[RMDB]
RNA sequence: GGGAACGACUCGAGUAGAGUCGAAAAGGGCUUGCUGAGGUGGCUGGAGUUUGGAGAAUUCUUUCGAGUAUAGUGUCGCUUCACCUCUAGUUUCUGUAUCCUAUAAACGACAUCGAGCAGAUGCGCCACUGAGUGAGGUCUUCGGACCUCACUCAGUAAAAGAAACAACAACAACAAC
Reactivity to DMS in 0.01 (KOAc 150mM, MgCl2 10mM, bicine 150mM(pH8.5), 24C), signal-to-noise 1, nucleotides 027 to 126: g020g010g040c040u000u000g010c050u020g030a190g070g000u000g000g020c060u000g000g000a090g010u000u030u020g050g000a080g000a090a120u000u000c060u000u040u000c000g000a070g000u040a000u000a110g040u020g000u010c030g000c050u000u000c060a070c250c050u090c060u000a040g000u000u000u000c070u020g020u000a090u000c050c000u030a130u000a030a230a190c090g020a030c000a000u000c090g000a210g000c130a170g000a110u020g000c000g000c080c000
Reactivity to 2A3 in 0.01 (KOAc 150mM, MgCl2 10mM, bicine 150mM(pH8.5), 24C), signal-to-noise 2, nucleotides 027 to 126: g040g000g000c010u060u050g010c050u120g050a040g000g000u030g000g070c020u030g000g050a050g020u060u200u120g160g000a200g070a140a130u040u030c050u060u140u180c240g000a010g090u110a220u020a200g100u120g050u060c050g000c030u040u040c020a030c000c000u010c000u000a030g000u000u040u020c070u140g040u050a110u060c000c010u010a050u040a050a280a000c120g150a060c010a010u060c010g050a040g040c280a000g050a010u060g020c020g010c050c000